[RMDB]
RNA sequence: GGGAACGACUCGAGUAGAGUCGAAAAGGCCGCGGUGCGUGCCAGCCUGCCGGCCCCGACGCACCGUCCACUCCUGGUCAUCCCCAGUCGGAACCUGCGUGACCACGACGAGCUCGUGCUGCCGGUGAUCUCUAGCGUUCUUCGGAACGCUAGAGAUAAAAGAAACAACAACAACAAC
Reactivity to DMS in 0.01 (KOAc 150mM, MgCl2 10mM, bicine 150mM(pH8.5), 24C), signal-to-noise 2, nucleotides 027 to 126: g000g010c090c070g000c020g010g020u000g010c000g000u010g010c110c100a130g000c050c060u010g000c150c120g000g000c010c060c060c050g010a040c010g010c030a000c020c010g000u000c060c110a140c090u000c020c070u000g020g010u000c020a100u000c020c020c030c060a090g030u000c070g000g010a120a080c080c020u010g010c080g000u000g010a150c080c010a040c010g000a060c030g020a130g030c110u010c030g030u010g000c090u010g000c020c020g010g010u000g010